[RMDB]
RNA sequence: GGGAACGACUCGAGUAGAGUCGAAAAUAAGCAAUGGGUUCUGGUCACAUCCCAUAACUCCUGAGUCAUACUGGCUUACCGCCUUCACGUGGCAAGGCUCCCAGUAUGUCUGGACUAGGUUACCCCAGCCUGGACUCUAAUUCGUUAGAGUCCAGGCAAAAGAAACAACAACAACAAC
Reactivity to DMS in 0.01 (KOAc 150mM, MgCl2 10mM, bicine 150mM(pH8.5), 24C), signal-to-noise 2, nucleotides 027 to 126: u000a100a050g000c110a140a070u000g010g000g030u000u000c050u000g000g020u000c100a190c160a110u000c030c010c020a070u020a090a070c190u000c040c020u000g000a020g010u010c000a010u000a000c010u000g020g000c190u000u040a070c170c180g050c000c010u000u000c190a160c270g020u010g000g000c110a010a020g010g000c070u010c290c000c000a000g000u000a000u000g010u000c010u000g000g000a070c080u030a040g020g000u000u000a110c050c000c000c180a150
Reactivity to 2A3 in 0.01 (KOAc 150mM, MgCl2 10mM, bicine 150mM(pH8.5), 24C), signal-to-noise 1, nucleotides 027 to 126: u120a030a000g060c080a030a110u090g030g000g000u100u060c030u130g020g030u060c020a010c010a130u110c070c000c000a000u070a040a050c050u040c020c040u070g060a020g030u020c000a000u030a020c010u020g000g070c050u100u120a120c090c030g040c030c020u010u010c070a100c170g290u150g050g060c090a030a030g040g000c000u010c000c010c010a020g000u010a010u000g010u000c030u020g020g000a010c010u030a090g060g000u120u080a090c000c020c030c010a000